[RMDB]
RNA sequence: GGGAACGACUCGAGUAGAGUCGAAAAAUAACACAACUUACGCUUUAGCUGCCUAAAAACCAGCCGGCGUGACUUCUAUAGGAUUGUUUGUGUCUUAUUAGAGGUCUCAAAACAGCAAGCUACGUUUAGGUGAUUGUCUAGUCACCUAAAAAGAGAACGUACUCCUGUACUUCGGUACAGGAGUACGAAAAGAAACAACAACAACAAC
Reactivity to 2A3 in 0.01 (KOAc 150mM, MgCl2 10mM, bicine 150mM(pH8.5), 24C), signal-to-noise 1, nucleotides 027 to 156: a000u200a070a010c030a010c020a110a100c070u140u110a000c030g000c020u050u120u120a020g000c000u010g000c010c010u100a080a060a010a010a010c000c000a000g010c000c080g020g000c010g000u010g000a000c010u000u020c030u020a000u000a000g010g000a000u020u180g030u120u010u050g020u010g000u020c000u100u000a090u000u180a000g000a010g060g030u000c000u070c120a100a150a050a100c040a010g030c000a020a000g000c000u020a020c000g040u010u000u020a000g000g000u000g020a010u040u150g200u180c070u030a020g000u000c000a000c030c000u000a000a000a000a000a000g080a030g010a060a030